[RMDB]
RNA sequence: GGGAACGACUCGAGUAGAGUCGAAAAUCGAUGAUGGCCUGUUCAGUGGCUAUGACGCCGAAAACCGUAAAUACGAUAAAACCAGCUGGAACUAUCAGUUGGAUGAAGACGGUUUUGCUAAACGGGACACUAAUAGCCGAUUCGUCGGCUAUUAGUGAAAAGAAACAACAACAACAAC
Reactivity to 2A3 in 0.01 (KOAc 150mM, MgCl2 10mM, bicine 150mM(pH8.5), 24C), signal-to-noise 4, nucleotides 027 to 126: u060c020g010a010u130g010a030u090g060g040c010c010u010g020u060u020c050a070g040u030g090g000c010u040a110u190g040a020c120g000c000c000g000a020a020a000a010c010c000g000u010a060a160a020u160a080c070g030a060u080a130a090a010a070c010c000a000g000c000u010g030g040a160a220c040u070a190u290c030a020g000u020u000g010g010a020u070g030a020a020g080a000c000g020g000u010u000u010u050g020c020u050a000a040a010c020g000g020g020a010
Reactivity to DMS in 0.01 (KOAc 150mM, MgCl2 10mM, bicine 150mM(pH8.5), 24C), signal-to-noise 5, nucleotides 027 to 126: u010c060g010a130u000g020a100u010g000g000c020c010u000g000u010u000c080a040g020u000g020g010c020u000a100u020g010a130c240g040c020c040g020a040a010a010a010c010c010g000u000a050a070a080u010a150c190g000a140u010a040a080a130a160c010c000a010g000c000u000g010g010a120a150c260u000a080u010c000a000g000u010u000g010g000a060u010g000a090a140g000a020c010g000g000u000u000u000u020g010c050u000a020a030a040c030g010g010g000a260